[RMDB]
RNA sequence: GGGAACGACUCGAGUAGAGUCGAAAAGAGCCUUGGUUCGCCAAGGCUCAAAUAAAUUCAGGUCAUUUGCUACCUUUAAGUGCAGCUAGAAAUUCAAAGGAAAAAGGCACAAGUUCGCUUGUGCCAACUAGAAUUUUAAGUUCGCUUAAAAUUCUAGAAAAGAAACAACAACAACAAC
Reactivity to DMS in 0.01 (KOAc 150mM, MgCl2 10mM, bicine 150mM(pH8.5), 24C), signal-to-noise 2, nucleotides 027 to 126: g000a000g020c000c010u000u000g000g000u000u000c210g050c000c000a000a010g000g010c000u000c000a000a020a050u000a040a100a110u000u010c070a030g020g010u000c060a100u010u000u010g000c040u010a010c010c010u010u010u000a020a020g010u000g000c050a020g030c190u010a090g000a040a040a090u010u010c090a060a080a170g000g000a050a050a090a150a100g000g010c000a000c010a020a030g010u000u020c240g010c010u000u000g010u000g010c000c000a010a020
Reactivity to 2A3 in 0.01 (KOAc 150mM, MgCl2 10mM, bicine 150mM(pH8.5), 24C), signal-to-noise 2, nucleotides 027 to 126: g000a000g000c000c000u010u000g020g000u050u130c180g000c080c000a000a000g000g010c000u000c000a010a000a000u010a000a000a000u110u070c050a010g020g040u020c020a140u010u070u190g000c010u020a020c000c030u060u120u180a080a060g070u060g020c000a010g020c060u110a030g090a060a140a010u230u130c110a140a100a090g060g060a110a050a040a030a040g000g000c000a000c010a010a000g000u040u080c220g040c110u000u000g000u010g000c000c000a000a000